[RMDB]
RNA sequence: GGGAACGACUCGAGUAGAGUCGAAAAAGACAGAGAUGCCGGUCGACUUCGCUGGUGUUGACGUCCGUGACUUCGGUGGUGACAUCAUGGGGAUGGAGGAGUUCUCGUCGGAGGAGCUGGACCAGUAGAAGGUAGUGUGUUUCGACACACUACCUUCAAAAGAAACAACAACAACAAC
Reactivity to DMS in 0.01 (KOAc 150mM, MgCl2 10mM, bicine 150mM(pH8.5), 24C), signal-to-noise 2, nucleotides 027 to 126: a030g030a040c050a050g000a300g010a010u010g030c010c000g000g010u010c070g000a160c130u010u000c090g020c040u000g000g000u000g000u000u000g010a200c120g020u010c020c030g000u010g010a130c080u000u000c050g010g020u000g010g000u000g000a090c080a020u000c020a050u010g040g000g010g000a090u000g010g000a060g010g000a110g000u010u010c060u010c080g040u000c050g010g000a090g000g000a100g010c020u010g010g000a150c020c020a060g020u010a120
Reactivity to 2A3 in 0.01 (KOAc 150mM, MgCl2 10mM, bicine 150mM(pH8.5), 24C), signal-to-noise 1, nucleotides 027 to 126: a010g040a000c010a000g050a000g010a030u000g040c020c010g040g050u210c110g050a140c110u180u110c050g000c050u030g080g000u050g010u020u020g040a030c020g000u040c010c000g070u080g090a100c020u080u060c050g030g030u070g020g040u060g010a040c020a070u060c020a110u110g000g060g020g050a030u100g050g100a060g030g000a050g040u090u020c070u020c020g010u050c000g000g020a100g010g010a050g080c020u040g040g050a080c020c030a040g050u130a060